[RMDB]
RNA sequence: GGGAACGACUCGAGUAGAGUCGAAAAGAGCUUAAUGCUAGAUAGUCUUUUAUAAACAUAACCAAUAACUGUUUUACUUGUUAUAAAACAGUUCGCAUGUUCAUUGGUAAGACUAUCUAGCAACAUAGAUAGUAUUCUUAUUCGUGAGAGUGCUAUCAAAAGAAACAACAACAACAAC
Reactivity to DMS in 0.01 (KOAc 150mM, MgCl2 10mM, bicine 150mM(pH8.5), 24C), signal-to-noise 9, nucleotides 027 to 126: g000a130g000c090u010u020a070a100u010g010c000u000a010g000a010u000a000g000u000c000u000u000u020u020a090u020a110a070a040c070a050u010a120a140c140c110a060a070u030a020a010c000u000g000u000u000u000u000a010c080u020u030g010u010u040a240u000a010a010a000a000c000a000g000u000u000c180g020c170a050u010g010u010u000c100a060u000u010g000g020u010a020a010g000a010c000u000a000u000c000u000a000g000c010a010a010c170a070u010a080
Reactivity to 2A3 in 0.01 (KOAc 150mM, MgCl2 10mM, bicine 150mM(pH8.5), 24C), signal-to-noise 9, nucleotides 027 to 126: g110a020g020c070u160u180a140a020u130g000c000u000a000g000a000u000a000g000u000c000u020u110u050u080a260u160a120a150a010c080a070u170a050a040c020c010a020a020u060a030a000c000u000g030u020u080u020u030a030c050u100u180g100u230u150a140u070a140a080a010a000c000a000g000u020u020c060g020c060a050u210g050u090u070c050a020u030u050g040g010u060a010a010g000a000c000u000a000u000c000u000a000g000c000a000a000c000a000u040a010
This 177-nucleotide RNA was probed chemically with DMS and 2A3. For DMS, 33,419 sequencing reads were counted. For DMS the reverse transcriptase was MarathonRT. Values cover nucleotides 27 to 126. The reactions ran in a buffer of 150 mM KOAc, 10 mM MgCl2 and 150 mM bicine (pH 8.5), at 24 C.